Structure probing data (2A3) for a 207-nucleotide construct.
RNA sequence: GGGAACGACUCGAGUAGAGUCGAAAAACAACAGAAUUCGUUCUGUUGUAACCGGUGGCUAUAGCUCAGUUGGUAGAGCCCUGGAUUGUGAUUCCAGUUGUCGUGGGUUCGAAUCCCAUUAGCCACCCCAAAGUACUCCGGGAUUCGUCCCGGAGUAGUAUACGGCCACAUUCGUGUGGCCGUAUACAAAAGAAACAACAACAACAAC
Reactivity to 2A3 in 0.01 (KOAc 150mM, MgCl2 10mM, bicine 150mM(pH8.5), 24C), signal-to-noise 1, nucleotides 027 to 156: a000c000a000a000c000a000g000a000a040u060u130c150g010u030u000c000u000g000u000u000g000u000a060a060c030c060g000g000u000g000g000c000u000a030u040a010g030c030u030c040a080g040u170u150g210g120u130a040g000a000g010c000c000c010u000g010g030a010u100u140g160u160g160a170u080u090c000c000a020g010u040u060g040u120c000g000u000g000g000g000u000u010c000g000a000a000u000c000c000c000a020u030u010a000g000c000c000a000c030c000c000c020a100a150a010g120u010a000c000u000c000c000g070g000g000a020u040u060c110g030u010c090c050c000g000g000a000g000u000a000

Source: RMDB library ARCHII, as collected in RNAgym. Conditions: 150 mM KOAc, 10 mM MgCl2 and 150 mM bicine (pH 8.5), 24 C. The 2A3 profile rests on 674 reads. For 2A3 the reverse transcriptase was SuperScript II with manganese.